The data come from the RNA Mapping Database (RMDB), library OK3TST. Chemical mapping of a 207-nucleotide RNA with 2A3. The RNA was probed in 150 mM KOAc, 10 mM MgCl2 and 150 mM bicine (pH 8.5) at 24 C. For 2A3 the reverse transcriptase was SuperScript II with manganese. For 2A3, 547 sequencing reads were counted.
[RMDB]
RNA sequence: GGGAACGACUCGAGUAGAGUCGAAAAUUCUAGCACUUUGGGAAGCUGAGGUGGGUGGAUCCCUUGAGGUGAUCCCACGCCUGGCCUUAAAUAGGUUUCAAUACACAAAUGCUUACCAUUGUGUUAUGGUUGCCUAUAGGUAGUCAGUACAGAAAUAGGCGUUUUACUAUUUCGAUAGUAAAACGCCAAAAGAAACAACAACAACAAC
Reactivity to 2A3 in 0.01 (KOAc 150mM, MgCl2 10mM, bicine 150mM(pH8.5), 24C), signal-to-noise 1, nucleotides 027 to 156: u060u000c000u020a020g000c020a010c010u050u010u000g000g000g000a040a000g030c000u000g010a020g060g100u040g000g100g040u090g020g030a020u000c010c030c000u030u290g160a110g030g040u120g050a040u020c050c000c000a010c000g000c000c000u000g010g000c000c030u070u150a100a140a110u280a050g000g040u090u020u180c140a110a050u220a100c050a000c010a080a110a130u180g010c010u070u040a010c000c000a010u000u000g000u000g000u020u030a010u030g030g000u040u020g060c000c000u110a110u080a200g000g050u040a030g020u040c100a030g060u160a080c050a090g190a100a080a160u300a100